About this RNA
The record gives the reactivity of an RNA of 177 nucleotides to DMS. The RNA was probed in 150 mM KOAc, 10 mM MgCl2 and 150 mM bicine (pH 8.5) at 24 C. Source: RMDB library TTRDEL, as collected in RNAgym. For DMS, 762 sequencing reads were counted.
[RMDB]
RNA sequence: GGGAACGACUCGAGUAGAGUCGAAAAGAUAUGGAUAGAUCGAUAAGUCGCAGUCGGAAACGACUGGCGACUUUUGACGAUUGGGUCCUAAGUCAAAGUUUUAGUCGCCUUCGGGCGACUAAAACAAUCACCAGUAGGUGUUCGCACCUACUGGUGAAAAAGAAACAACAACAACAAC
Reactivity to DMS in 0.01 (KOAc 150mM, MgCl2 10mM, bicine 150mM(pH8.5), 24C), signal-to-noise 1, nucleotides 027 to 126: g020a070u000a220u010g010g000a010u010a300g000a000u000c010g010a210u010a010a020g010u000c000g000c000a030g020u000c000g000g000a160a100a100c020g010a030c000u010g010g000c000g010a020c000u010u000u000u010g000a210c100g010a040u000u000g030g020g010u010c010c000u000a020a210g000u000c060a080a160a130g000u000u000u000u010a010g000u000c010g010c000c000u010u010c230g010g000g020c010g000a010c000u000a000a000a000a000c000a100a090